[RMDB]
RNA sequence: GGGAACGACUCGAGUAGAGUCGAAAAAAUCAUAAAUUGCUCUACAAAUAGUAUACUGGAAACAUCCGGAUGUGAGGUUAUAAUUAAAAAUGAAAGCAAAACAGCUUCCCUGAAAAGAAAGAAAACUACAUUAUAACAGGUUCGCCUGUUAUAAUGUAAAAGAAACAACAACAACAAC
Reactivity to DMS in 0.01 (KOAc 150mM, MgCl2 10mM, bicine 150mM(pH8.5), 24C), signal-to-noise 1, nucleotides 027 to 126: a090a020u010c050a040u000a080a060a040u060u000g010c020u000c020u010a150c130a010a090a120u010a100g000u000a100u000a070c010u020g020g000a160a050a070c140a090u050c150c140g050g000a070u020g000u000g010a110g000g010u010u000a050u000a010a090u070u000a010a040a040a050a110u040g010a200a120a010g010c010a000a050a130a090c120a070g000c080u000u020c010c000c000u000g000a020a060a160a140g000a080a050a110g000a080a150a090a040c080u000
Reactivity to 2A3 in 0.01 (KOAc 150mM, MgCl2 10mM, bicine 150mM(pH8.5), 24C), signal-to-noise 3, nucleotides 027 to 126: a000a030u210c100a060u170a140a110a100u060u060g010c000u020c010u040a080c050a020a040a020u090a110g080u090a020u060a150c030u080g000g000a000a140a000c010a130u100c040c060g070g000a070u090g030u020g010a070g020g020u070u070a020u040a190a270u130u200a010a130a030a000a010u060g010a020a030a000g040c050a000a000a000a130c000a010g010c000u010u000c000c000c000u000g040a080a020a000a080g120a030a060a000g070a000a150a040a000c060u030
An RNA of 177 nucleotides, treated with DMS and 2A3 and read out base by base.
Reactivities are rounded to 0.1 and cut off at 0 and 3.
Source: RMDB library RFM100, as collected in RNAgym.
For 2A3, 1,258 sequencing reads were counted.
The DMS profile rests on 1,130 reads.